The record gives the reactivity of an RNA of 207 nucleotides to DMS and 2A3. DMS adducts were read by reverse transcription with MarathonRT. For 2A3 the reverse transcriptase was SuperScript II with manganese. Conditions: 150 mM KOAc, 10 mM MgCl2 and 150 mM bicine (pH 8.5), 24 C. Source: RMDB library ARCHII, as collected in RNAgym. DMS (dimethyl sulfate) methylates the pairing face of unpaired adenines and cytosines.

RNA sequence: GGGAACGACUCGAGUAGAGUCGAAAAUCUCCGUCUGAGGUUAGUUGGAAGAGCUUAAUCAGACUAGCUGAAUGGAAGCCUGUUACCGGGCCGAUGUUUAUGCGAAAUGCUAAUACGGUGACUACGCUCGUAGAUAUUUAAGUGCCGAUAUUUCUGGACUACUACACCAGUUCGCUGGUGUAGUAGUAAAAGAAACAACAACAACAAC
Reactivity to DMS in 0.01 (KOAc 150mM, MgCl2 10mM, bicine 150mM(pH8.5), 24C), signal-to-noise 2, nucleotides 027 to 156: u050c010u010c020c210g020u000c020u020g000a120g010g010u000u010a010g030u000u000g030g030a150a170g000a120g000c010u010u010a080a170u000c030a040g020a060c040u000a160g050c010u000g010a020a070u000g000g010a190a080g010c020c000u000g000u010u000a080c140c050g010g030g070c010c000g030a300u000g010u000u000u000a040u020g020c020g000a120a050a100u010g020c110u000a070a100u000a030c020g020g040u000g000a060c020u000a090c100g020c090u000c080g010u000a050g010a090u000a120u000u000u000a090a090g010u000g010c060c040g040a180u000a020u000u000u000c010u000g000g020
Reactivity to 2A3 in 0.01 (KOAc 150mM, MgCl2 10mM, bicine 150mM(pH8.5), 24C), signal-to-noise 5, nucleotides 027 to 156: u040c020u010c030c030g000u020c000u000g020a020g050g010u210u030a010g010u070u110g120g040a050a030g030a020g040c010u020u030a010a010u010c000a000g010a010c010u020a010g000c020u020g010a020a020u040g020g050a000a030g020c000c010u050g020u060u040a020c010c010g000g000g010c010c010g000a010u030g030u040u030u030a170u300g000c000g030a020a040a000u240g090c280u270a020a010u030a030c010g030g000u010g000a000c000u030a020c020g070c060u060c090g050u070a000g060a170u060a140u120u190u110a210a060g020u050g070c040c040g030a060u020a080u130u030u000c020u020g010g050